[RMDB]
RNA sequence: GGGAACGACUCGAGUAGAGUCGAAAAGAUAUGGACGUUGAACUACUCUUAAGCAAGCGAAGAACUCGGAAACGAGGGAGCUUGCCAUAGAGCAACGUCCUAAGUCAAACAACCCUUCGGGGUUGAAGAAACAACAGUUGUUCGCAACUGUUGUUUCAAAAGAAACAACAACAACAAC
Reactivity to 2A3 in 0.01 (KOAc 150mM, MgCl2 10mM, bicine 150mM(pH8.5), 24C), signal-to-noise 1, nucleotides 027 to 126: g030a060u070a070u120g000g000a000c030g000u010u010g030a110a010c060u120a070c010u300c020u050u030a110a070g040c030a000a000g000c000g240a300a020g010a140a020c000u000c010g000g010a080a040a020c000g000a010g000g020g000a020g000c010u000u000g070c030c000a090u110a020g010a000g000c000a000a030c000g000u000c000c000u000a000a010g000u030c000a010a030a110c000a000a000c000c000c000u000u040c270g070g020g020g020u000u020g020a060a000
Reactivity to DMS in 0.01 (KOAc 150mM, MgCl2 10mM, bicine 150mM(pH8.5), 24C), signal-to-noise 1, nucleotides 027 to 126: g000a060u020a300u020g010g000a010c000g000u020u000g000a060a090c130u040a260c010u000c020u030u000a300a220g000c010a000a040g010c040g030a040a100g000a160a120c010u010c000g000g000a130a040a130c010g010a050g020g000g000a110g000c000u000u010g020c000c010a080u000a000g020a020g020c000a000a000c010g010u020c000c000u000a060a040g000u030c040a190a140a300c020a000a000c000c000c000u000u000c140g020g000g000g000u000u000g000a060a180